Record summary:
This 207-nucleotide RNA was probed chemically with 2A3. Reactivities are given for positions 27 through 156. The RNA was probed in 150 mM KOAc, 10 mM MgCl2 and 150 mM bicine (pH 8.5) at 24 C.
RNA sequence: GGGAACGACUCGAGUAGAGUCGAAAAUUCUGCCUAGCCAACACUAACUAUGAACGAGUACACAGCCGAACCAUAAUCCUGGCCCGAGGACUGCAAACACUCCUACCACUCAUAGCAACAUGAUGACUAGUAGCAAGCCUCACAAACCUAGCCCUACCCCAACCCAAUAGUUCGCUAUUGGGUUGGGAAAAGAAACAACAACAACAAC
Reactivity to 2A3 in 0.01 (KOAc 150mM, MgCl2 10mM, bicine 150mM(pH8.5), 24C), signal-to-noise 1, nucleotides 027 to 156: u000u000c000u020g050c000c010u030a050g030c020c000a020a090c060a120c020u250a290a020c040u040a030u200g050a090a000c040g060a070g000u130a030c110a000c010a010g030c040c000g020a110a020c000c000a040u050a220a020u120c000c000u020g020g000c000c000c000g020a060g020g020a100c080u000g000c010a080a000a030c000a040c050u040c000c040u100a070c000c000a000c010u040c030a090u040a080g010c080a000a050c050a060u060g010a040u050g010a010c020u040a040g040u000a000g040c010a020a020g020c010c010u000c000a020c020a020a010a010c010c010u040a060g040c000c000c010u070a090c000